[RMDB]
RNA sequence: GGGAACGACUCGAGUAGAGUCGAAAACAGCGGCUCCGCGCUUGGCACAACAAUGGUAUGCGUGGUUUGCGGCCCUAAUUUAUUCAGCACGCGACUGCCGCAUCCCGCACGGGAGGCGCAGCUGCUGCAGCGCUCACAGUUUCGACUGUGAGCGCUGAAAAGAAACAACAACAACAAC
Reactivity to 2A3 in 0.01 (KOAc 150mM, MgCl2 10mM, bicine 150mM(pH8.5), 24C), signal-to-noise 2, nucleotides 027 to 126: c000a000g000c000g020g000c000u180c190c010g050c000g040c030u080u130g110g000c040a040c000a240a140c030a100a300u220g020g010u090a000u080g000c000g020u020g000g060u100u180u060g090c000g000g000c010c000c000u070a100a090u100u120u260a300u250u110c010a030g030c050a060c040g030c000g130a040c010u070g030c040c010g000c030a000u010c000c000c000g020c030a000c000g040g030g030a040g060g050c000g000c000a000g000c000u000g000c000u030g000
This 177-nucleotide RNA was probed chemically with 2A3. For 2A3, 584 sequencing reads were counted. Values cover nucleotides 27 to 126.